[RMDB]
Chemical mapping of a 177-nucleotide RNA with 2A3 and DMS.
For 2A3, 3,397 sequencing reads were counted.
Conditions: 150 mM KOAc, 10 mM MgCl2 and 150 mM bicine (pH 8.5), 24 C.
As a SHAPE reagent, 2A3 marks flexible, mostly unpaired nucleotides at the ribose 2'-OH.
The data come from the RNA Mapping Database (RMDB), library OK2TST.
For DMS the reverse transcriptase was MarathonRT.
RNA sequence: GGGAACGACUCGAGUAGAGUCGAAAAUCAUGUGGAGGUAAACGGAUUCGAACCGUUGACAACCGCCGUGCAAAGGCGGUGCUCUACCAGCUGAGCUAUACCCCCGCUGGGCCAUUCUGGAUUUGAAGACUAAUAUCGAGUUCGCUCGAUAUUAGUCAAAAGAAACAACAACAACAAC
Reactivity to 2A3 in 0.01 (KOAc 150mM, MgCl2 10mM, bicine 150mM(pH8.5), 24C), signal-to-noise 3, nucleotides 027 to 126: u080c040a050u150g040u040g060g000a050g060g000u070a100a020a010c010g010g030a060u130u180c100g060a130a030c010c030g000u000u020g020a010c010a010a030c010c000g000c020c010g050u150g120c080a110a070a060g000g020c000g010g010u000g000c010u010c010u020a080c010c010a020g000c030u050g020a010g020c040u090a040u100a280c010c010c000c000c010g000c020u020g010g000g010c000c010a030u130u040c040u070g080g000a110u040u100u170g090a090a010
Reactivity to DMS in 0.01 (KOAc 150mM, MgCl2 10mM, bicine 150mM(pH8.5), 24C), signal-to-noise 6, nucleotides 027 to 126: u010c050a060u010g020u010g000g010a040g010g020u000a050a040a030c010g010g000a200u010u010c250g020a130a110c010c000g000u010u000g010a100c170a160a060c000c000g010c010c010g020u010g020c300a070a110a170g010g010c000g000g000u010g010c030u000c010u000a090c050c070a050g000c170u000g000a040g000c060u000a130u000a130c060c020c030c070c080g010c040u000g000g000g010c050c030a060u000u000c070u000g000g010a230u000u000u010g010a120a160